[RMDB]
RNA sequence: GGGAACGACUCGAGUAGAGUCGAAAAGCAGUCCGACAGGGGUCACUGCGAACACGACAGGGCUGGUUUGUCACCUGGAGUGGAUUAGGACGGACUACUCCGUCAGGGGACAGUAGGACGUCCGAAAGGCAUCCAGCAGCUUCGGCUGUUGGAUGCCAAAAGAAACAACAACAACAAC
Reactivity to 2A3 in 0.01 (KOAc 150mM, MgCl2 10mM, bicine 150mM(pH8.5), 24C), signal-to-noise 2, nucleotides 027 to 126: g020c000a000g020u070c010c040g130a300c200a160g050g000g020g000u040c050a000c030u010g010c000g000a040a020c020a000c000g000a000c010a030g010g000g040c050u120g030g210u100u160u160g110u110c050a060c100c010u000g020g000a030g000u050g040g000a050u030u230a100g000g000a000c000g000g020a000c000u010a000c040u070c080c020g120u250c180a080g030g050g030g020a020c090a120g020u000a010g000g000a000c000g000u010c000c000g000a000a000a000
Reactivity to DMS in 0.01 (KOAc 150mM, MgCl2 10mM, bicine 150mM(pH8.5), 24C), signal-to-noise 3, nucleotides 027 to 126: g010c020a030g020u030c030c000g010a120c170a140g000g010g050g010u000c080a070c060u000g000c030g010a060a110c040a020c000g010a170c040a020g010g000g030c020u010g000g000u010u000u000g000u020c020a190c010c000u000g000g000a160g000u000g000g010a090u030u060a070g040g000a050c030g000g000a050c000u020a030c010u000c050c040g000u020c160a070g000g000g000g000a100c210a010g010u020a010g000g000a060c010g000u000c010c000g020a020a080a050